[RMDB]
RNA sequence: GGGAACGACUCGAGUAGAGUCGAAAACUCGUAUUCGUACGAGACUGGGGUCCUAGUUCUUCGAGGCAAGGACAUGCUCUGAAGCCUCCACGGAGCAACAGCCUUGCUACCCACCGAAGACUAGGACGGAGGCACCCUUUUGAAGGCUUCGGCCUUCUUCUUUUCAGAGUUUCGACUCUGAAAAGAAAAAAGAAACAACAACAACAAC
Reactivity to DMS in 0.01 (KOAc 150mM, MgCl2 10mM, bicine 150mM(pH8.5), 24C), signal-to-noise 2, nucleotides 027 to 156: c000u000c020g030u000a070u000u000c280g030u000a020c010g000a000g000a110c040u010g000g030g050g010u000c020c000u010a000g020u010u020c010u000u010c010g010a290g010g000c030a010a090g010g020a080c050a300u010g030c020u010c010u000g040a040a150g000c010c000u000c000c040a300c080g000g000a030g030c000a100a070c060a080g020c010c030u000u000g000c030u000a040c050c040c020a300c060c010g030a020a040g000a030c010u010a000g010g020a010c000g020g020a040g080g040c020a100c010c020c020u000u000u000u000g000a060a040g010g010c000u000u000c300g090g000c000c000u000u000c000
Reactivity to 2A3 in 0.01 (KOAc 150mM, MgCl2 10mM, bicine 150mM(pH8.5), 24C), signal-to-noise 3, nucleotides 027 to 156: c000u000c000g010u010a040u100u100c220g040u070a000c010g000a000g040a050c160u140g070g010g060g030u000c010c010u010a010g050u190u120c010u010u010c000g010a000g000g020c000a010a010g010g010a040c040a170u280g020c000u000c000u010g030a080a030g010c010c000u010c040c000a010c010g000g000a000g020c030a070a030c050a080g140c000c000u010u010g000c010u010a050c050c060c050a090c040c000g000a000a000g000a000c000u000a000g010g000a000c010g000g000a000g020g010c010a030c010c010c010u060u140u120u170g010a000a000g000g000c020u060u170c300g120g000c000c000u000u000c040

Notes:
Structure probing data (DMS and 2A3) for a 207-nucleotide construct. As a SHAPE reagent, 2A3 marks flexible, mostly unpaired nucleotides at the ribose 2'-OH. Source: RMDB library RNAMAK, as collected in RNAgym. For 2A3 the reverse transcriptase was SuperScript II with manganese. For DMS, 2,616 sequencing reads were counted.